[RMDB]
RNA sequence: GGGAACGACUCGAGUAGAGUCGAAAAGCGGUGGAGACCUUCGCUCGGGUGGUCGGCGGGACAUUUUCGCGCAUCCAGUUCACCCCGGAUCUGGUGCCCACCGACAUCAUCGGGACGCGCAUCUACCCAAUGUAUGGCAGUUCGCUGCCAUACAUUGAAAAGAAACAACAACAACAAC
Reactivity to 2A3 in 0.01 (KOAc 150mM, MgCl2 10mM, bicine 150mM(pH8.5), 24C), signal-to-noise 5, nucleotides 027 to 126: g040c030g020g010u040g030g040a090g030a090c010c020u060u070c130g000c010u020c020g050g000g030u070g030g070u050c010g030g010c000g010g020g030a040c080a140u130u140u110u120c140g000c020g000c060a020u030c020c000a030g010u050u050c040a100c000c010c020c000g030g010a050u020c020u040g040g010u090g050c000c000c000a020c020c000g010a010c010a080u100c010a050u070c020g010g000g060a070c020g010c010g000c040a050u010c020u070a080c010c010
Reactivity to DMS in 0.01 (KOAc 150mM, MgCl2 10mM, bicine 150mM(pH8.5), 24C), signal-to-noise 6, nucleotides 027 to 126: g010c080g000g000u010g010g010a110g020a090c070c040u000u000c070g020c020u000c140g010g020g020u000g000g010u000c030g010g020c030g000g010g000a090c230a080u010u000u010u000c100g020c100g020c070a110u000c040c040a060g010u000u000c040a150c060c030c030c030g010g000a030u000c030u000g020g010u000g010c020c000c020a070c030c010g010a040c040a070u010c060a070u000c030g000g010g000a080c080g010c270g020c070a130u000c050u000a100c070c030